An RNA of 177 nucleotides, treated with DMS and read out base by base.

RNA sequence: GGGAACGACUCGAGUAGAGUCGAAAAGAUAUGGACGUCUCUUGAAGUGCGACGAAGUAAGUACACUACAAUCUCGGAAACGAGAUUGUAGUGUACUUACAGAGCACCAAGAGGACGUCCUAAGUCAGUCUUGAAAACAGUUCGCUGUUUUCAAGACAAAAGAAACAACAACAACAAC
Reactivity to DMS in 0.01 (KOAc 150mM, MgCl2 10mM, bicine 150mM(pH8.5), 24C), signal-to-noise 2, nucleotides 027 to 126: g000a050u000a300u000g000g000a020c000g020u000c000u030c010u000u000g010a300a130g020u010g030c020g000a210c300g000a060a090g010u000a010a000g000u010a000c000a020c010u000a010c000a000a000u000c020u000c000g000g000a110a050a180c000g020a000g010a010u000u000g000u000a010g010u000g000u000a000c000u000u000a000c010a010g010a120g020c010a000c000c020a030a260g000a040g020g010a020c000g000u000c000c000u000a000a020g010u010c040a150
The reactions ran in a buffer of 150 mM KOAc, 10 mM MgCl2 and 150 mM bicine (pH 8.5), at 24 C.